[RMDB]
Source information:
An RNA of 177 nucleotides, treated with 2A3 and DMS and read out base by base.
RNA sequence: GGGAACGACUCGAGUAGAGUCGAAAAGCUACUUUCUUCGGAAAGUAGCAAAUAAGAAAUGAGCCAAUAAGGACGGAAAAAGGGUCAAAAUCCGCUCCUAAAAAAGCUCCAGGUUCGCCUGGAGCAAGCUUAUUACAACGUUCGCGUUGUAAUAAGCAAAAGAAACAACAACAACAAC
Reactivity to 2A3 in 0.01 (KOAc 150mM, MgCl2 10mM, bicine 150mM(pH8.5), 24C), signal-to-noise 2, nucleotides 027 to 126: g020c000u010a000c000u000u030u000c010u010u020c060g040g020a020a020a000g000u000a000g010c000a000a030a000u050a000a010g080a010a130a070u170g030a040g060c010c030a030a010u080a090a050g010g000a000c000g020g090a050a070a040a050a060g180g010g030u160c060a050a050a020a160u020c000c020g060c180u030c010c000u070a140a090a000a000a020a010g000c010u000c000c000a010g040g000u010u040c110g060c020c000u010g000g020a000g000c000a000a000
Reactivity to DMS in 0.01 (KOAc 150mM, MgCl2 10mM, bicine 150mM(pH8.5), 24C), signal-to-noise 2, nucleotides 027 to 126: g000c000u010a000c020u010u000u010c000u000u020c220g030g000a000a010a010g000u000a000g000c000a010a000a060u000a120a120g000a090a040a060u010g010a110g000c020c030a120a070u010a090a040g010g020a070c010g000g000a030a020a090a100a020g000g010g010u000c090a090a050a170a080u000c010c000g000c190u000c010c000u000a000a050a060a100a120a080g010c000u010c000c010a000g000g000u000u020c190g020c010c000u000g000g000a000g010c010a010a030
Description: The DMS profile rests on 1,450 reads. Conditions: 150 mM KOAc, 10 mM MgCl2 and 150 mM bicine (pH 8.5), 24 C.